RNA sequence: GGGAACGACUCGAGUAGAGUCGAAAAAUAAUUUUCAUGCAGGAGGUCCAGGGAUUACAUUCUAAGACGUUUUUGCCAUCGCUAAGGAGACUUUCCUUUUCAGGGGCUAUAUCUGAAAAUCAUUCAAGGAUAGGGACUGCUUCUUUUGACACCAUUAAAAUAUGCUAUUAUUCGUAAUAGCAUAUUUAAAAGAAACAACAACAACAAC
Reactivity to DMS in 0.01 (KOAc 150mM, MgCl2 10mM, bicine 150mM(pH8.5), 24C), signal-to-noise 3, nucleotides 027 to 156: a080u010a080a080u010u000u010u000c020a070u020g010c040a080g030g000a110g040g020u000c020c020a130g030g010g020a070u000u020a070c040a220u000u000c070u000a090a080g010a030c030g020u010u000u000u010u000g030c030c010a070u000c080g020c080u010a040a110g020g030a080g000a100c090u000u010u000c000c010u000u000u000u000c000a090g040g020g010g050c070u000a050u000a050u010c020u020g000a060a040a040a100u010c040a070u000u000c050a080a140g010g000a040u000a090g030g010g030a080c060u000g010c000u010u000c020u000u000u010u000g010a100c060a150c040c000a070u000u010a070
Reactivity to 2A3 in 0.01 (KOAc 150mM, MgCl2 10mM, bicine 150mM(pH8.5), 24C), signal-to-noise 2, nucleotides 027 to 156: a000u120a050a060u080u030u100u130c030a000u080g020c010a010g000g070a030g010g060u040c020c040a010g000g010g000a030u140u120a070c020a070u100u100c040u070a130a030g060a110c090g020u030u020u040u130u170g010c000c000a060u020c040g010c070u020a010a000g030g010a120g010a160c040u180u150u050c000c000u050u040u040u030c060a060g020g000g050g000c040u060a040u010a000u160c010u020g020a010a010a060a050u050c010a090u120u100c060a070a030g050g000a040u040a040g050g000g020a030c020u000g000c000u030u070c010u080u160u070u040g020a060c010a040c070c040a030u110u160a070